[RMDB]
RNA sequence: GGGAACGACUCGAGUAGAGUCGAAAAGAUAUGGAAUCCCAUGGGUUCAACAGCUCGGAAACGAGACAUGAACAGUGGAGAUUCCUAAGUCAAAACGAUACACAACUCUUCGGAGUUGUGUAUCGAAGGGCAUUAAUAUCUUCGGAUAUUAAUGCCCAAAAGAAACAACAACAACAAC
Reactivity to DMS in 0.01 (KOAc 150mM, MgCl2 10mM, bicine 150mM(pH8.5), 24C), signal-to-noise 1, nucleotides 027 to 126: g000a070u010a300u030g000g030a010a000u000c010c000c000a010u010g040g000g010u000u000c000a000a070c180a140g000c000u000c000g020g010a090a080a130c000g000a020g010a060c090a140u000g010a010a010c000a300g080u000g000g000a120g000a030u000u000c000c010u010a020a030g000u000c050a060a060a130a160c010g010a020u010a000c000a000c000a040a010c000u000c000u000u010c170g010g000a010g000u000u000g010u000g010u010a000u000c000g000a010a060
Reactivity to 2A3 in 0.01 (KOAc 150mM, MgCl2 10mM, bicine 150mM(pH8.5), 24C), signal-to-noise 1, nucleotides 027 to 126: g010a020u100a030u080g000g010a000a020u060c000c020c060a000u090g300g000g060u000u000c020a070a070c030a230g030c020u000c000g010g060a060a070a050c010g000a060g050a080c050a070u100g010a010a010c000a000g000u020g010g170a300g000a180u020u000c010c000u000a090a000g080u010c030a050a000a120a050c000g000a000u000a010c000a000c000a010a010c000u030c020u120u230c300g030g000a000g000u060u000g000u010g000u000a000u010c000g000a020a000